Chemical mapping of a 170-nucleotide RNA with DMS and 2A3.
Reactivities are rounded to 0.1 and cut off at 0 and 3.
2A3 adducts were read by reverse transcription with SuperScript II with manganese.
Values cover nucleotides 27 to 129.

RNA sequence: GGGAACGACUCGAGUAGAGUCGAAAACCUCACAGGGUUCAGAAUACCAGUACGUUAUCUUCUGUCAAACAGCAGAUACGGCACAUGCUAACAACAUUAACAGAUUUAAUGUUGCAAUCACUCGUGCAAGGCCGGGAGUUCGCUCCCGGCAAAAGAAACAACAACAACAAC
Reactivity to DMS in 0.01 (KOAc 150mM, MgCl2 10mM, bicine 150mM(pH8.5), 24C), signal-to-noise 3, nucleotides 027 to 129: c010c000u030c100a040c160a080g030g010g030u110u040c000a040g050a170a100u030a200c040c030a070g060u050a110c010g040u040u040a050u050c000u000u120c000u020g000u040c280a110a100a260c040a090g060c060a020g000a080u040a020c050g080g000c070a000c020a040u090g040c190u020a160a220c050a070a040c040a050u020u000a000a010c120a290g050a210u000u000u000a000a000u090g000u070u040g000c020a080a070u020c080a050c050u040c090g000u000g030c050a110a140g050
Reactivity to 2A3 in 0.01 (KOAc 150mM, MgCl2 10mM, bicine 150mM(pH8.5), 24C), signal-to-noise 4, nucleotides 027 to 129: c010c010u010c000a080c020a060g000g000g030u120u140c030a060g090a120a110u120a190c060c000a010g020u040a040c040g030u060u080a020u010c010u010u010c000u010g110u100c080a080a120a160c000a060g000c000a000g000a000u010a040c030g010g000c070a020c020a090u020g020c030u070a060a070c000a000a000c000a000u000u010a000a010c030a090g160a250u050u020u040a000a000u030g000u000u000g000c020a000a010u080c010a020c060u050c060g040u000g000c090a030a070g140